[RMDB]
RNA sequence: GGGAACGACUCGAGUAGAGUCGAAAACGCUUUGAUGGCGGCAUACUUCUCCCGCAGGAUCUUUGCCCGGCCUUCCUUCGUCUCCUGACGGGCGCGGCCAAGGGCCAGCGCAUCGGCUGGAACGUCAUGAUCCAUCACCUUUCGAGGUGAUGGAUCAAAAAGAAACAACAACAACAAC
Reactivity to 2A3 in 0.01 (KOAc 150mM, MgCl2 10mM, bicine 150mM(pH8.5), 24C), signal-to-noise 1, nucleotides 027 to 126: c030g020c040u190u210u300g120a080u180g090g000c020g030g030c030a100u150a110c080u080u040c010u000c020c010c000g000c090a040g060g000a070u050c090u140u080u040g000c000c000c000g000g000c000c000u050u030c000c010u060u050c030g020u030c030u000c110c010u060g020a040c000g030g000g010c030g010c010g000g050c000c040a180a190g110g110g000c130c010a070g030c010g020c060a180u090c020g030g040c030u020g000g060a060a040c020g070u060c040a050
Reactivity to DMS in 0.01 (KOAc 150mM, MgCl2 10mM, bicine 150mM(pH8.5), 24C), signal-to-noise 1, nucleotides 027 to 126: c130g030c060u010u010u000g010a130u010g020g010c040g020g040c140a040u010a060c150u010u010c040u010c030c040c060g010c130a070g010g030a050u000c060u000u030u000g010c080c020c000g030g010c050c060u000u000c040c080u000u020c020g000u000c070u000c030c030u000g000a050c040g040g000g020c020g030c080g000g070c020c010a150a140g040g020g040c060c020a090g040c010g000c040a050u010c010g000g000c040u000g000g020a020a030c040g010u020c200a100